[RMDB]
RNA sequence: GGGAACGACUCGAGUAGAGUCGAAAAGGCAAGUUCUGGUGGCUGGGGAGGCCUAGAGCAUCACAGCCCAGUGGAGGGCUGCACAUGGCAGGGGAGGGGAGAGCAAGAGUGUGCGGGCGAGGGAGGACUCUUACCGAUUGUUCGCAAUCGGUAAGAGAAAAGAAACAACAACAACAAC
Reactivity to 2A3 in 0.01 (KOAc 150mM, MgCl2 10mM, bicine 150mM(pH8.5), 24C), signal-to-noise 5, nucleotides 027 to 126: g050g000c040a020a090g020u090u040c020u060g110g040u140g040g000c040u040g010g010g090g030a020g040g000c000c010u070a070g010a030g020c060a040u070c050a010c000a010g010c010c020c010a070g050u150g120g160a200g010g020g010c020u030g000c000a060c020a090u100g050g000c070a020g010g000g020g040a180g020g010g030g000a130g010a000g020c010a100a050g030a050g060u110g010u040g040c020g020g000g010c080g040a130g020g010g010a040g030g040a010
Reactivity to DMS in 0.01 (KOAc 150mM, MgCl2 10mM, bicine 150mM(pH8.5), 24C), signal-to-noise 2, nucleotides 027 to 126: g010g040c110a150a080g000u000u000c030u000g010g050u010g000g000c050u030g000g010g010g000a090g000g000c090c050u010a030g000a110g000c040a030u000c090a200c030a000g010c020c010c000a130g030u060g000g000a110g000g010g000c000u000g000c050a060c220a070u000g000g000c030a130g000g000g000g000a080g000g000g000g010a130g010a080g000c100a050a090g000a080g030u010g030u030g000c050g000g000g000c130g010a090g000g000g000a030g020g000a180